[RMDB]
RNA sequence: GGGAACGACUCGAGUAGAGUCGAAAAGAUCUCGACUUCCUUCGACUUCGACUCUUCAGAGGAUCUCGAAGUCAGUCGAGAAGGACUCUAGAGCUGACUGAUCGAAGAGUCCUUCUCGAUCAGGAAGCUCUAGUCAGGAAGCUCUAGUCCUAGCUUCGGAAUCAAAAUCGUUCGCGAUUUUGAUUCCAAAAGAAACAACAACAACAAC
Reactivity to 2A3 in 0.01 (KOAc 150mM, MgCl2 10mM, bicine 150mM(pH8.5), 24C), signal-to-noise 1, nucleotides 027 to 156: g060a060u060c000u000c040g000a000c000u020u000c000c000u080u100c100g000a000c000u000u000c000g060a030c020u000c010u230u110c100a100g080a090g230g010a070u010c010u010c080g000a000a000g010u010c000a000g000u010c000g000a000g010a000a000g000g000a000c040u030c000u010a050g000a020g100c040u110g140a120c090u140g060a090u040c040g030a120a090g000a140g000u040c020c000u030u010c000u000c000g000a020u020c030a000g000g000a000a010g000c030u010c010u030a000g000u010c000a050g000g120a000a000g000c000u000c030u050a010g060u050c000c010u020a000g000c030u020u010c060
This 207-nucleotide RNA was probed chemically with 2A3. Values cover nucleotides 27 to 156. Values are in units of 0.01, from 0 to 300, in steps of 10. The reactions ran in a buffer of 150 mM KOAc, 10 mM MgCl2 and 150 mM bicine (pH 8.5), at 24 C.